[RMDB]
RNA sequence: GGGAACGACUCGAGUAGAGUCGAAAAUGGCUCCCCCUGGUCUCCUGAAUCUGUGCUAAAGUAAAUCUGAUUUGUACCUCUGCAUUUGGAGAGCUGCUUUCUCUUUUAAAUGUAUUCAGCAGAUCAGCACCAAAGACUUAUUCGUAAGUCUUUGGUGAAAAGAAACAACAACAACAAC
Reactivity to DMS in 0.01 (KOAc 150mM, MgCl2 10mM, bicine 150mM(pH8.5), 24C), signal-to-noise 6, nucleotides 027 to 126: u020g020g020c120u010c010c010c000c080c000u000g000g000u000c010u000c140c000u010g010a040a040u010c110u010g000u010g000c060u010a170a140a080g020u010a060a090a090u020c030u000g000a110u010u010u000g010u010a050c090c040u010c070u000g000c000a030u010u000u000g000g010a030g000a010g010c300u010g010c130u020u030u010c000u000c000u000u010u010u010a010a030a030u010g010u000a030u020u000c090a050g000c130a010g010a020u000c020a020g010
Reactivity to 2A3 in 0.01 (KOAc 150mM, MgCl2 10mM, bicine 150mM(pH8.5), 24C), signal-to-noise 9, nucleotides 027 to 126: u140g090g010c030u040c000c000c000c000c000u010g000g000u010c010u030c020c010u010g030a050a040u080c100u090g040u030g020c030u090a100a040a040g050u070a070a170a170u100c030u040g030a070u030u030u090g010u040a030c000c010u030c010u030g000c010a030u010u000u030g020g010a010g000a000g010c060u100g090c040u110u220u040c010u000c000u000u030u020u300a010a020a010u010g000u000a030u020u060c020a010g000c000a000g010a020u010c000a000g000
This 177-nucleotide RNA was probed chemically with DMS and 2A3.
It was measured as part of the RMDB libraries RFM100 and RFMREP.
2A3 adducts were read by reverse transcription with SuperScript II with manganese.